[RMDB]
RNA sequence: GGGAACGACUCGAGUAGAGUCGAAAAUAAAACAUGGUUACCAUAAACUAUCCGUGAAGGUAGCCAUGUACACGGAUAGUUAAAUAAAAGCUGAGCGUUAGGAAAAACCUAAUGCUCAGCAAAAAAACAUACCCUAUACGUUCGCGUAUAGGGUAUGAAAAGAAACAACAACAACAAC
Reactivity to 2A3 in 0.01 (KOAc 150mM, MgCl2 10mM, bicine 150mM(pH8.5), 24C), signal-to-noise 1, nucleotides 027 to 126: u140a020a080a010a010c010a050u040g020g000u050u010a030c000c000a040u160a120a170a070c010u020a050u080c040c000g030u020g160a060a050g040g010u020a000g000c000c000a000u000g000u000a010c020a010c020g060g000a020u060a060g090u090u120a150a110a020u130a060a100a040a030g000c000u000g010a000g010c000g000u000u010a000g000g010a010a140a130a190a150c000c000u000a000a000u010g000c000u020c000a000g030c020a000a000a000a000a000a000a000
Reactivity to DMS in 0.01 (KOAc 150mM, MgCl2 10mM, bicine 150mM(pH8.5), 24C), signal-to-noise 3, nucleotides 027 to 126: u010a080a050a110a200c010a010u000g000g000u000u010a050c000c000a180u000a050a120a040c030u010a020u000c060c020g010u010g000a090a060g010g010u000a020g000c000c010a000u000g010u000a030c090a070c020g000g000a050u000a010g010u000u000a050a100a040u000a050a070a120a160g000c010u000g010a010g010c000g000u000u000a000g000g000a120a120a100a130a120c010c000u000a000a000u000g010c000u000c000a000g000c000a000a000a060a090a040a010a020

An RNA of 177 nucleotides, treated with 2A3 and DMS and read out base by base. In probing experiments dimethyl sulfate is read out at A N1 and C N3, which are open when not base-paired. The DMS profile rests on 3,169 reads. For DMS the reverse transcriptase was MarathonRT. It was measured as part of the RMDB library M2PK90. The RNA was probed in 150 mM KOAc, 10 mM MgCl2 and 150 mM bicine (pH 8.5) at 24 C. Reactivities are given for positions 27 through 126.